This 177-nucleotide RNA was probed chemically with 2A3 and DMS. Reactivities are rounded to 0.1 and cut off at 0 and 3. Conditions: 150 mM KOAc, 10 mM MgCl2 and 150 mM bicine (pH 8.5), 24 C.
RNA sequence: GGGAACGACUCGAGUAGAGUCGAAAAGCUGUGUAUCGCAGGGCUCGAUCAGUGGGCGUUGGCUCAGGUCGAUUGCUCUAUUGGUUUGGUCUGUGACCUGGUUGCUCGCUGAGAGUAAAACCAAUGGCUAAAUAAUAUAAUUCGUUAUAUUAUUUAGAAAAGAAACAACAACAACAAC
Reactivity to 2A3 in 0.01 (KOAc 150mM, MgCl2 10mM, bicine 150mM(pH8.5), 24C), signal-to-noise 6, nucleotides 027 to 126: g020c010u000g010u020g010u100a030u110c040g010c050a020g020g040g020c010u010c020g020a060u030c020a050g050u040g020g020g000c030g040u080u120g070g000c020u030c070a030g050g020u010c000g040a050u050u230g020c020u000c000u040a030u000u040g030g020u010u020u050g020g000u010c000u030g070u050g030a050c000c000u020g040g050u060u100g020c000u010c010g030c120u150g040a030g000a000g020u060a030a060a010a030c010c010a030a050u090g050g000
Reactivity to DMS in 0.01 (KOAc 150mM, MgCl2 10mM, bicine 150mM(pH8.5), 24C), signal-to-noise 5, nucleotides 027 to 126: g010c010u000g000u010g020u010a040u010c040g010c260a060g000g010g010c020u010c070g000a090u010c030a060g030u020g000g000g000c010g020u030u020g020g020c020u010c090a050g000g010u000c020g000a060u020u020g000c050u000c010u000a030u000u010g000g010u000u000u000g010g000u000c000u010g000u010g000a050c010c020u000g000g010u010u010g010c000u000c010g010c170u030g010a150g000a060g010u000a050a030a030a050c020c000a030a050u020g000g010